[RMDB]
RNA sequence: GGGAACGACUCGAGUAGAGUCGAAAAUGAACCACUAAGUAGAUAAUGAUUAAUGUUAAGGAAGAGGAAAUAUUCAGUAUAUAGAUAUGCCUUAGCAUCAUAUCUUGUACUAAACACGCUAAACAGUUUAUUGAUGUGAUCAAUUUCCAACAGAAUAGAUAUCAGACAUCUUCGGAUGUCUGAUAUCAAAAGAAACAACAACAACAAC
Reactivity to 2A3 in 0.01 (KOAc 150mM, MgCl2 10mM, bicine 150mM(pH8.5), 24C), signal-to-noise 2, nucleotides 027 to 156: u080g010a000a030c100c000a010c000u050a010a100g050u100a050g080a090u050a090a130u160g050a040u060u170a080a070u070g000u040u030a030a030g040g000a030a050g050a090g080g080a110a090a030u130a090u060u110c010a020g010u020a010u000a010u080a010g040a020u020a010u020g020c040c050u070u060a060g050c020a020u050c010a000u010a000u030c000u000u030g020u000a010c000u040a010a100a000c060a010c060g020c060u100a010a080a070c020a060g010u070u080u020a090u090u040g050a080u100g010u010g040a010u070c000a000a040u060u010u000c020c030a000a050c030a030g090a150a030u090a120
Reactivity to DMS in 0.01 (KOAc 150mM, MgCl2 10mM, bicine 150mM(pH8.5), 24C), signal-to-noise 1, nucleotides 027 to 156: u000g060a040a130c050c010a110c050u000a110a130g020u000a100g020a070u000a110a060u000g000a060u000u000a040a090u000g010u000u000a030a080g040g000a060a100g000a170g000g040a140a280a100u000a010u000u000c030a020g020u000a050u000a010u000a050g000a030u000a020u000g030c060c100u000u000a190g040c160a100u000c000a030u010a000u010c010u000u000g030u020a000c020u000a010a030a060c030a090c100g050c070u030a110a100a100c040a080g010u000u000u010a060u010u010g010a210u020g010u000g000a190u040c040a040a120u000u010u000c000c000a090a190c060a110g000a150a060u000a130
The record gives the reactivity of an RNA of 207 nucleotides to 2A3 and DMS. It was measured as part of the RMDB library OK3TST. For DMS, 1,444 sequencing reads were counted. For 2A3 the reverse transcriptase was SuperScript II with manganese. Reactivities are given for positions 27 through 156.